This 177-nucleotide RNA was probed chemically with DMS. The DMS profile rests on 1,056 reads.
RNA sequence: GGGAACGACUCGAGUAGAGUCGAAAAAAAAGAUAUGGACGAAUGAACUACGCUCCGAAGGUGCAACAGCUUUGCUCGGAAACGAGCAAAGACAUGCACUGUAGAGCGCAUUCGUCCUAAGUCAAAAGACCCAAUCUAUGUUCGCAUAGAUUGGGUCAAAAGAAACAACAACAACAAC
Reactivity to DMS in 0.01 (KOAc 150mM, MgCl2 10mM, bicine 150mM(pH8.5), 24C), signal-to-noise 1, nucleotides 027 to 126: a180a060a030a170g010a060u000a300u000g000g000a000c010g000a000a000u010g010a160a040c170u030a300c050g000c000u000c000c020g000a080a140g000g000u010g000c000a040a020c230a170g000c000u010u000u000g010c000u000c020g000g030a030a030a190c000g030a020g030c000a000a010a010g000a010c160a110u010g000c010a000c010u000g000u020a160g000a000g040c000g000c000a010u000u000c000g000u050c000c000u000a000a080g000u000c010a090a050a050a060